This 177-nucleotide RNA was probed chemically with DMS and 2A3. Source: RMDB library M2PK50, as collected in RNAgym. Conditions: 150 mM KOAc, 10 mM MgCl2 and 150 mM bicine (pH 8.5), 24 C. The DMS profile rests on 2,131 reads. For DMS the reverse transcriptase was MarathonRT.

[RMDB]
RNA sequence: GGGAACGACUCGAGUAGAGUCGAAAACUAGCAGGGUUCGCCCUGCUAGAAAAGGGCCGAUGGUAGUGUGGGGUCUCCCCAUGCGAGAGUAGGGAACUGCCAAAAGUGAAGUGUUCGCACUUCACAACGGUAUUGGUAGGUUCGCCUACCAAUACCGAAAAGAAACAACAACAACAAC
Reactivity to DMS in 0.01 (KOAc 150mM, MgCl2 10mM, bicine 150mM(pH8.5), 24C), signal-to-noise 2, nucleotides 027 to 126: c010u000a000g010c000a000g010g000g000u000u020c250g000c000c020c000u000g020c010u000a000g010a010a070a090a080g010g000g030c000c020g020a120u060g000g000u000a070g010u000g020u000g020g010g010g020u010c120u010c030c000c000c000a030u000g000c000g000a220g000a050g000u000a090g000g000g000a060a120c040u000g000c020c010a070a080a120a160g010u000g000a000a010g000u000g020u000u010c240g020c020a020c000u000u000c010a000c000a060a070
Reactivity to 2A3 in 0.01 (KOAc 150mM, MgCl2 10mM, bicine 150mM(pH8.5), 24C), signal-to-noise 2, nucleotides 027 to 126: c000u010a010g000c010a000g000g000g040u040u110c130g150c020c000c000u010g000c000u000a000g000a000a010a000a010g030g020g070c010c020g050a070u030g000g030u020a030g010u000g000u020g020g010g090g130u070c220u270c040c000c000c000a020u040g000c030g030a070g020a000g020u040a010g010g000g000a010a030c000u050g050c010c000a060a080a010a010g020u010g010a010a000g010u020g030u100u140c200g000c070a000c000u010u000c000a000c000a020a010